[RMDB]
RNA sequence: GGGAACGACUCGAGUAGAGUCGAAAAGUCUUGUCAUCUCUUAGGGCCUCAGACUAUCACAUAACAGAGACAAAUACUCUUCAACAUCAUCAGAGACAUAUAGGCUCCUAAAUAAAUGCAUGAGGCUGUGCUAAAUGGCAUUAUAGCAGGAUGGCUAACUCCGCUAGUAGUUCGCUACUAGCGGAGUAAAAGAAACAACAACAACAAC
Reactivity to 2A3 in 0.01 (KOAc 150mM, MgCl2 10mM, bicine 150mM(pH8.5), 24C), signal-to-noise 2, nucleotides 027 to 156: g030u050c040u050u120g000u000c000a020u000c030u000c000u070u040a040g000g000g060c000c000u010c020a060g030a170c040u080a100u220c050a070c060a140u240a240a050c150a110g110a010g050a060c110a040a080a050u240a200c000u010c020u120u120c050a130a160c030a110u150c000a000u020c000a020g060a020g060a180c090a070u300a010u020a040g020g110c000u130c070c040u050a110a000a000u100a010a050a010u080g040c020a010u000g000a020g050g000c060u010g020u010g010c010u040a100a050a090u050g040g010c020a040u090u090a060u060a090g000c020a000g010g040a010u040g000g000c010u040a010
Structure probing data (2A3) for a 207-nucleotide construct. Conditions: 150 mM KOAc, 10 mM MgCl2 and 150 mM bicine (pH 8.5), 24 C. Values cover nucleotides 27 to 156. It was measured as part of the RMDB library OK3TST.